[RMDB]
RNA sequence: GGGAACGACUCGAGUAGAGUCGAAAAUCUCAGCCCCUCCACCUUGGGGUGCCCUAUUCGGAGCACUGCAGUUCCGAUAGAAAGGCUAAGCACGUCGCAAUGACGUAAGGUGGGACUUUUCCCUAGGCAAGGACUAAAGCUUCGGCUUUAGUCCUUGAAAAGAAACAACAACAACAAC
Reactivity to DMS in 0.01 (KOAc 150mM, MgCl2 10mM, bicine 150mM(pH8.5), 24C), signal-to-noise 2, nucleotides 027 to 126: u000c010u000c010a270g010c000c000c020c000u000c000c000a020c000c000u000u010g000g010g000g010u000g000c010c010c010u000a110u010u000c000g020g000a010g000c010a160c230u000g030c200a220g000u000u000c000c000g010a010u000a000g010a050a150a090g000g000c020u000a070a080g060c150a100c010g000u000c000g050c230a130a080u010g010a000c000g000u000a000a000g000g010u000g000g000g000a040c150u000u000u000u000c000c010c030u010a090g010g030